The record gives the reactivity of an RNA of 177 nucleotides to DMS and 2A3. For 2A3, 708 sequencing reads were counted. 2A3 adducts were read by reverse transcription with SuperScript II with manganese. The reactions ran in a buffer of 150 mM KOAc, 10 mM MgCl2 and 150 mM bicine (pH 8.5), at 24 C.

[RMDB]
RNA sequence: GGGAACGACUCGAGUAGAGUCGAAAAAGCGACGGCCAUCGUUGUAGGUAGCAGAACUACUGAGUACGCUACUUGAUACGUGAAUCGCCACACGUUAAAAAAGGCAGUCAUGCUGGCAGACUCAGGAAUAGGGGAUUUGAUUCGUCAAAUCCCCUAUAAAAGAAACAACAACAACAAC
Reactivity to DMS in 0.01 (KOAc 150mM, MgCl2 10mM, bicine 150mM(pH8.5), 24C), signal-to-noise 4, nucleotides 027 to 126: a050g020c020g000a060c030g000g010c020c060a110u040c080g000u000u000g020u010a070g000g010u000a050g020c030a110g010a110a150c160u000a150c110u000g010a070g010u000a150c120g010c010u000a030c020u010u000g020a080u040a100c020g030u000g020a040a060u010c180g000c040c050a060c000a040c040g010u010u080a000a020a030a020a110a100g000g040c010a040g020u010c070a030u000g000c040u010g000g000c030a090g010a050c020u010c030a060g000g010a130
Reactivity to 2A3 in 0.01 (KOAc 150mM, MgCl2 10mM, bicine 150mM(pH8.5), 24C), signal-to-noise 2, nucleotides 027 to 126: a000g000c020g040a010c000g010g000c010c010a110u040c100g010u020u090g110u160a130g000g080u050a010g050c080a020g030a150a020c030u070a010c000u090g000a020g000u030a000c090g000c000u000a000c000u010u060g110a070u050a180c000g000u010g000a060a110u150c100g040c000c000a010c000a000c020g020u080u120a040a040a040a040a040a030g000g000c060a090g030u100c030a010u060g040c020u030g060g070c000a060g010a070c030u050c040a000g000g010a000